[RMDB]
RNA sequence: GGGAACGACUCGAGUAGAGUCGAAAAGAUAUGGAGGUCCCAUCCUUCCAACAGCUCGGAAACGAGACAUGGAAGAAUGGAGACCUCCUAAGUCAAACAGCGUGUUGAGUUCGCUCAACACGCUGAAGAAUCAAUUUACGUUCGCGUAAAUUGAUUCAAAAGAAACAACAACAACAAC
Reactivity to 2A3 in 0.01 (KOAc 150mM, MgCl2 10mM, bicine 150mM(pH8.5), 24C), signal-to-noise 3, nucleotides 027 to 126: g000a000u060a020u150g000g000a020g010g000u000c010c000c010a010u000c000c000u020u020c010c020a090a060c090a200g040c000u020c000g010g060a070a100a070c010g020a010g040a070c020a060u090g000g010a010a000g020a030a020u030g000g020a300g000a050c010c000u000c000c000u000a010a000g000u000c020a050a070a110c000a000g000c000g000u010g000u010u020g000a010g010u050u230c300g040c150u000c000a000a010c010a000c000g000c010u000g000a000a010
Reactivity to DMS in 0.01 (KOAc 150mM, MgCl2 10mM, bicine 150mM(pH8.5), 24C), signal-to-noise 5, nucleotides 027 to 126: g000a040u000a300u000g000g010a010g010g010u000c000c000c000a010u000c010c010u000u000c000c000a040a080c220a180g010c000u000c000g000g010a140a110a240c000g000a010g000a030c080a210u000g000g000a010a010g000a020a000u000g010g000a140g020a010c000c000u000c000c000u000a000a060g010u000c040a150a140a250c010a000g000c000g010u000g000u000u000g000a020g000u000u020c260g010c000u000c010a000a000c000a000c000g000c000u000g000a020a060